[RMDB]
Source information:
Structure probing data (DMS and 2A3) for a 177-nucleotide construct. The RNA was probed in 150 mM KOAc, 10 mM MgCl2 and 150 mM bicine (pH 8.5) at 24 C. 2A3 is a SHAPE reagent: it acylates the 2'-hydroxyl of flexible nucleotides of all four kinds.
RNA sequence: GGGAACGACUCGAGUAGAGUCGAAAAGAUAUGGAUUGGGAGGUGCUUAUCGAAGAACUCGGAAACGAGGGAGAUAAGAACUACACCGAACAAUCCUAAGUCAAACUCGCAAGUUCGCUUGCGAGAACAUAUUUAACAACUUCGGUUGUUAAAUAUGAAAAGAAACAACAACAACAAC
Reactivity to DMS in 0.01 (KOAc 150mM, MgCl2 10mM, bicine 150mM(pH8.5), 24C), signal-to-noise 8, nucleotides 027 to 126: g010a030u000a300u010g000g010a020u000u000g010g000g000a300g000g010u000g000c000u000u000a000u000c000g000a120a120g000a120a120c000u000c010g010g010a150a070a120c000g010a020g000g000g000a070g010a010u000a010a010g000a060a030c090u010a300c020a000c000c000g010a300a270c010a000a010u000c000c000u000a010a080g010u000c030a110a100a170c000u000c000g010c000a010a000g000u000u010c230g020c000u000u000g000c000g010a010g000a080a160
Reactivity to 2A3 in 0.01 (KOAc 150mM, MgCl2 10mM, bicine 150mM(pH8.5), 24C), signal-to-noise 5, nucleotides 027 to 126: g020a010u070a040u160g000g000a000u000u010g020g000g020a060g010g000u010g010c000u020u010a010u010c050g130a300a040g010a080a050c000u010c010g010g020a070a040a030c010g000a010g000g000g020a050g000a000u010a000a010g000a010a010c060u180a030c070a000c000c000g000a010a000c000a000a000u000c000c000u010a090a000g020u000c030a040a030a140c000u000c000g000c000a000a020g020u120u150c280g070c190u000u000g010c000g000a000g000a010a000